RNA sequence: GGGAACGACUCGAGUAGAGUCGAAAACUGCAGGUCAACGGAUAUUCUUCAGAUCAGCUAUUGCAGAAGAAAGGUCAGCCAAGCGCUCUGGGCCGUGUCGACUGUAUAUAGGAGCUUCUGAUUUCAACCAGAAGCUAACUCUCUCCGAAACAAUGAGAUAAAUGGUAGUCUUCGGACUACCAUUUAUAAAAGAAACAACAACAACAAC
Reactivity to 2A3 in 0.01 (KOAc 150mM, MgCl2 10mM, bicine 150mM(pH8.5), 24C), signal-to-noise 3, nucleotides 027 to 156: c020u010g010c040a020g000g080u110c020a030a020c070g000g000a010u050a060u190u100c050u050u080c030a030g010a140u010c030a010g060c010u100a060u250u080g010c010a050g020a120a010g090a080a200a030g060g020u050c030a000g070c080c010a120a000g020c030g030c070u060c050u030g070g020g020c020c020g040u030g030u050c020g010a070c000u020g060u050a070u010a010u070a180g140g000a020g000c000u000u000c000u000g070a130u110u280u280c030a080a050c060c000a000g000a000a010g010c000u000a010a020c020u010c010u000c020u020c020c020g080a020a040a020c040a030a210u190g020a050g010
Reactivity to DMS in 0.01 (KOAc 150mM, MgCl2 10mM, bicine 150mM(pH8.5), 24C), signal-to-noise 2, nucleotides 027 to 156: c050u010g000c040a060g020g000u000c010a080a120c060g020g020a130u010a120u000u010c060u000u000c060a120g000a070u000c020a110g040c040u000a070u000u000g040c000a150g000a070a190g030a050a040a100g000g000u010c000a090g010c030c030a060a120g000c060g010c050u040c040u010g030g010g030c010c050g000u000g010u000c040g010a140c010u010g020u000a090u000a100u000a080g010g010a120g020c000u000u000c000u000g010a060u000u000u040c150a050a070c030c020a020g020a020a020g000c010u000a010a020c060u000c020u000c020u010c010c060g020a190a050a110c090a040a130u000g020a130g010

About this RNA:
The record gives the reactivity of an RNA of 207 nucleotides to 2A3 and DMS. It was measured as part of the RMDB library OK3TST. Values are in units of 0.01, from 0 to 300, in steps of 10. The reactions ran in a buffer of 150 mM KOAc, 10 mM MgCl2 and 150 mM bicine (pH 8.5), at 24 C.